The record gives the reactivity of an RNA of 207 nucleotides to DMS and 2A3.
It was measured as part of the RMDB library OK3TST.
[RMDB]
RNA sequence: GGGAACGACUCGAGUAGAGUCGAAAAACUCCGGGAUCGCGACUGGCAGACGACCGUCAUCGGCGACGGGCCCGAGCGUGACGCCUACGAAGACCUCGCGAGCGACCUUCGUAUCGACGAUCGGGUGCGGUUCGUCGGCGACCUCGAGCUCGACGAGGAAUAUUCUAGGUUUCGACCUAGAAUAUUCAAAAGAAACAACAACAACAAC
Reactivity to DMS in 0.01 (KOAc 150mM, MgCl2 10mM, bicine 150mM(pH8.5), 24C), signal-to-noise 1, nucleotides 027 to 156: a080c010u000c010c030g040g000g020a070u000c030g000c000g020a230c050u020g020g030c100a110g000a140c040g000a100c000c010g050u010c020a080u000c030g020g000c000g010a030c000g010g020g010c030c020c020g030a060g010c050g010u000g000a140c050g020c040c020u010a060c020g020a090a050g020a030c020c000u010c010g010c110g000a140g010c050g010a050c040c010u020u030c030g030u010a030u010c020g010a170c010g020a040u000c000g000g010g050u010g020c000g000g000u000u000c020g060u000c000g020g020c020g010a080c090c030u010c020g000a090g020c020u000c000g030a120c020g020a120g000
Reactivity to 2A3 in 0.01 (KOAc 150mM, MgCl2 10mM, bicine 150mM(pH8.5), 24C), signal-to-noise 4, nucleotides 027 to 156: a000c030u020c030c020g040g000g030a090u090c060g020c050g120a100c100u120g060g020c070a070g080a220c030g060a060c020c010g040u070c040a050u070c030g030g020c010g010a020c010g010g040g010c020c000c000g010a020g020c020g010u020g100a110c060g030c030c030u010a010c010g010a020a000g040a090c020c030u050c050g050c050g100a080g080c030g030a060c010c010u010u010c010g000u010a070u140c030g050a040c010g010a030u030c000g020g000g010u100g130c030g040g060u080u090c000g000u010c000g000g000c000g010a020c010c040u010c020g000a010g000c030u020c060g100a120c040g060a070g140
Conditions: 150 mM KOAc, 10 mM MgCl2 and 150 mM bicine (pH 8.5), 24 C.